[RMDB]
RNA sequence: GGGAACGACUCGAGUAGAGUCGAAAAGAAAGGGACCCCUGCCACGGGACGCAGCCAGUCGAACCCAGGCAUGUUUUUGCAUGCCGGACUGACCCCUACUGCGGGCAGGAGGGGUGGUCCCGAAAGAAUUAGCGUAUCAGUUCGCUGAUACGCUAAUAAAAGAAACAACAACAACAAC
Reactivity to 2A3 in 0.01 (KOAc 150mM, MgCl2 10mM, bicine 150mM(pH8.5), 24C), signal-to-noise 2, nucleotides 027 to 126: g040a050a040a000g000g000g000a020c030c020c000c000u020g040c000c010a120c110g050g060g080a020c050g000c010a000g060c050c010a000g010u020c000g040a140a160c000c020c010a010g000g030c000a000u020g170u020u140u090u130u300g030c000a000u000g000c000c000g000g020a000c010u000g050a000c000c010c000c010u020a060c040u040g020c090g050g120g000c010a000g020g040a010g000g050g000g030u020g000g010u000c000c000c020g010a050a040a000g030a010
Reactivity to DMS in 0.01 (KOAc 150mM, MgCl2 10mM, bicine 150mM(pH8.5), 24C), signal-to-noise 4, nucleotides 027 to 126: g010a090a100a170g020g000g000a040c030c020c300c010u010g000c010c030a110c100g000g010g020a150c190g000c070a030g020c080c130a030g000u000c020g000a100a140c030c020c030a160g000g000c000a000u000g000u000u010u010u010u010g020c000a000u000g000c000c010g000g000a020c030u000g000a110c020c020c020c010u000a100c040u000g000c070g020g010g020c020a030g010g010a060g000g010g010g030u000g020g000u000c000c000c020g030a060a060a100g020a130